[RMDB]
About this RNA
Structure probing data (2A3) for a 177-nucleotide construct. For 2A3 the reverse transcriptase was SuperScript II with manganese. The 2A3 profile rests on 911 reads.
RNA sequence: GGGAACGACUCGAGUAGAGUCGAAAACAUGAAUAAGAAUUCCGGUCUUUUCCGGAGCCACCAAGUGGAAUGCUACGUGCAUAAAUGCACGUAGCUAAAGACCCGAAGGCUAGCAAUAUCUAGCCUAGCCUCGGCUAAUAUUCGUAUUAGCCGAGGCAAAAGAAACAACAACAACAAC
Reactivity to 2A3 in 0.01 (KOAc 150mM, MgCl2 10mM, bicine 150mM(pH8.5), 24C), signal-to-noise 2, nucleotides 027 to 126: c000a050u190g050a030a070u190a120a010g140a180a160u040u010c000c000g000g020u040c230u160u090u010u000c000c000g020g000a000g000c030c040a050c010c050a000a160g010u020g050g060a150a060u090g020c000u000a030c020g080u000g000c040a100u170a210a230a000u260g000c000a000c000g000u010a000g000c000u000a000a000a000g000a010c000c000c060g030a000a000g020g010c000u000a000g000c070a210a130u030a060u270c000u000a010g000c030c000u000a000